[RMDB]
RNA sequence: GGGAACGACUCGAGUAGAGUCGAAAACAAGUUCGAGCACCUGCGGCUCGAGUUCACGGAUCCGCCGUGGGGUGAAGCCCUUGGACACCAAGGUACGCAUCCGCAGAUGUGCGGGGUCGUCCAUGGCGUCCUGCCCCAGUUUCGACUGGGGCAGGACAAAAGAAACAACAACAACAAC
Reactivity to DMS in 0.01 (KOAc 150mM, MgCl2 10mM, bicine 150mM(pH8.5), 24C), signal-to-noise 1, nucleotides 027 to 126: c150a150a160g000u010u000c020g000a030g040c010a080c030c160u020g000c140g020g020c020u000c020g000a030g000u010u000c070a010c040g010g020a150u000c150c130g020c000c050g030u000g010g010g000g000u000g000a100a040g000c100c000c060u000u000g010g000a040c040a050c010c000a020a030g010g010u000a020c040g030c070a010u000c030c000g020c010a030g000a150u050g050u000g000c000g010g000g010g010u000c020g000u000c000c000a030u010g010g010c060
Reactivity to 2A3 in 0.01 (KOAc 150mM, MgCl2 10mM, bicine 150mM(pH8.5), 24C), signal-to-noise 1, nucleotides 027 to 126: c030a050a080g010u080u000c000g020a000g000c040a050c090c110u180g030c250g030g000c000u010c020g000a040g030u100u070c040a000c170g030g010a100u080c020c080g090c030c000g090u020g000g030g000g060u080g060a070a060g050c060c000c000u040u050g050g000a060c030a030c030c030a040a020g080g020u130a000c040g000c030a030u000c000c000g000c030a030g070a300u300g040u000g180c000g010g010g040g050u040c000g020u000c000c060a010u050g030g060c000
An RNA of 177 nucleotides, treated with DMS and 2A3 and read out base by base. The 2A3 profile rests on 937 reads. The RNA was probed in 150 mM KOAc, 10 mM MgCl2 and 150 mM bicine (pH 8.5) at 24 C. Reactivities are rounded to 0.1 and cut off at 0 and 3.